This 177-nucleotide RNA was probed chemically with 2A3 and DMS. DMS (dimethyl sulfate) methylates the pairing face of unpaired adenines and cytosines. DMS adducts were read by reverse transcription with MarathonRT.
RNA sequence: GGGAACGACUCGAGUAGAGUCGAAAAGCAAUAUGUAGGAAUUUGCAGUUAGAUUAGACAGUAUGGGAAGUACACAUGCUGUUUAAUCCCACAAUAAAAACCCUGAGUACUUACAGGUACACUGAGGCUUGUAAAAGGGGUUCGCCCCUUUUACAAGAAAAGAAACAACAACAACAAC
Reactivity to 2A3 in 0.01 (KOAc 150mM, MgCl2 10mM, bicine 150mM(pH8.5), 24C), signal-to-noise 8, nucleotides 027 to 126: g020c010a020a040u070a070u300g110u180a140g060g090a140a090u010u010u040g020c040a030g030u050u120a030g010a030u010u000a010g000a010c000a000g010u010a000u000g010g010g110a200a070g180u140a040c130a000c000a040u000g010c000u000g000u000u000u000a000a000u010c000c000c000a070c030a040a070u240a090a040a010a020a020c000c000c010u010g030a010g020u020a010c000u070u070a040c060a070g040g030u020a010c060a010c050u020g050a030g070g030
Reactivity to DMS in 0.01 (KOAc 150mM, MgCl2 10mM, bicine 150mM(pH8.5), 24C), signal-to-noise 5, nucleotides 027 to 126: g010c020a040a010u030a030u040g010u060a110g030g000a110a080u020u010u000g000c010a110g010u030u030a130g000a080u010u000a000g000a020c000a020g010u010a000u000g000g000g020a100a130g020u030a120c090a050c000a000u000g000c000u000g000u000u000u000a010a010u000c000c050c110a070c220a100a100u060a040a020a060a050a170c050c000c010u010g000a090g010u000a000c010u000u020a110c280a100g000g020u010a040c050a090c060u010g000a110g010g000
Source: RMDB libraries RFM100 and RFMREP, as collected in RNAgym.